[RMDB]
RNA sequence: GGGAACGACUCGAGUAGAGUCGAAAAACACCCUCGCCCCGAAGCAAGUAAGAUAGAGAAAAAGCGGUUCUCGGGAGCUUCAGUUGUUUCCACCGGGUAGUAGCCGAAGCGACAGCGCAAAGGGGGCCAUAUUGUUCACCUUCGGGUGAACAAUAUGAAAAGAAACAACAACAACAAC
Reactivity to DMS in 0.01 (KOAc 150mM, MgCl2 10mM, bicine 150mM(pH8.5), 24C), signal-to-noise 1, nucleotides 027 to 126: a090c230a120c010c010c020u020c150g000c050c000c000c070g000a160a160g000c030a100a080g010u000a050a080g000a140u000a130g000a130g000a050a030a060a120a130g010c130g030g020u010u000c030u000c030g030g020g050a210g020c020u010u010c030a110g040u020u020g000u000u000u000c020c070a140c150c150g020g020g000u020a030g010u010a090g020c000c030g000a080a050g040c010g020a130c100a080g000c140g030c100a080a050a080g020g000g000g000g000c120